[RMDB]
RNA sequence: GGGAACGACUCGAGUAGAGUCGAAAAUCUCUUUGACCCAUUAUUUCAGACUUAAAAACAAGCAUGUUUUCAAAUGGCACUAUGAGCUGCCAAUGAUGUAUCACCACCAUAUCUCAUUAUUCUCCAGACGUUCAAAGUUCUUCGGAACUUUGAACGUAAAAGAAACAACAACAACAAC
Reactivity to DMS in 0.01 (KOAc 150mM, MgCl2 10mM, bicine 150mM(pH8.5), 24C), signal-to-noise 1, nucleotides 027 to 126: u000c010u010c010u010u000u000g010a230c110c030c020a050u010u050a080u000u000u010c060a120g040a160c110u000u030a030a040a060a080a040c130a080a170g060c030a040u020g000u000u000u000u000c040a010a050a080u000g000g000c000a030c020u000a140u030g010a080g020c150u000g000c020c010a080a140u000g000a050u030g010u000a090u000c020a010c070c050a030c030c080a060u000a020u010c020u000c070a060u000u000a090u000u000c010u000c000c060a150g000
Reactivity to 2A3 in 0.01 (KOAc 150mM, MgCl2 10mM, bicine 150mM(pH8.5), 24C), signal-to-noise 3, nucleotides 027 to 126: u000c000u000c000u070u050u140g030a050c000c010c030a050u020u060a180u020u200u040c050a080g020a100c040u070u040a080a060a010a010a030c020a030a020g080c090a130u110g070u010u060u030u080c080a150a100a100u080g000g000c020a010c040u090a140u220g100a070g030c010u020g000c010c010a020a050u050g020a010u080g030u070a030u110c000a010c030c000a000c000c040a020u020a020u100c030u010c010a010u020u120a080u070u010c060u010c010c010a020g010